[RMDB]
RNA sequence: GGGAACGACUCGAGUAGAGUCGAAAAUCCUAAGUCCUUCCGAGGUAGCUUGGAUUUACUACUCGAGAAUAUCGGAAACGAUAUUCUAAGACAGGUAGUUGUCAGCUACCGAGGAAGGAUAUGGAAAAACCUGUGCCUGGUUCGCCAGGCACAGGAACAGUUAUAUGCGAUUCGUCGCAUAUAACUGAAAAGAAACAACAACAACAAC
Reactivity to 2A3 in 0.01 (KOAc 150mM, MgCl2 10mM, bicine 150mM(pH8.5), 24C), signal-to-noise 3, nucleotides 027 to 156: u020c000c010u020a090a020g040u000c000c000u000u010c010c010g010a030g010g020u000a000g000c000u080u210g180g000a050u230u230u110a010c000u000a000c000u020c010g020a020g000a010a000u000a000u000c000g010g020a090a050a040c010g000a000u000a010u020u000c020u020a160a070g100a080c090a080g010g020u000a000g010u000u020g020u000c010a010g000c010u000a000c000c000g010a000g000g000a000a000g000g000a000u000a000u000g010g040a030a070a000a010a030c010c000u010g000u000g030c010c000u020g000g060u080u070c240g040c100c000a000g000g000c000a010c000a000g000g000a000a000
Reactivity to DMS in 0.01 (KOAc 150mM, MgCl2 10mM, bicine 150mM(pH8.5), 24C), signal-to-noise 1, nucleotides 027 to 156: u000c010c050u000a110a220g010u000c000c000u000u000c010c000g000a300g000g010u020a000g010c010u010u010g050g000a050u000u020u000a040c020u010a030c000u000c010g010a040g020a030a010u000a000u010c020g040g000a160a180a300c010g000a020u000a000u000u000c010u010a120a060g020a200c300a050g020g000u000a000g010u000u020g030u000c040a050g010c000u000a010c000c000g010a300g000g020a010a000g000g000a000u000a020u000g000g000a050a110a040a110a120c010c000u000g010u000g040c010c000u000g030g000u010u020c300g050c000c000a010g000g030c000a000c000a000g020g000a020a100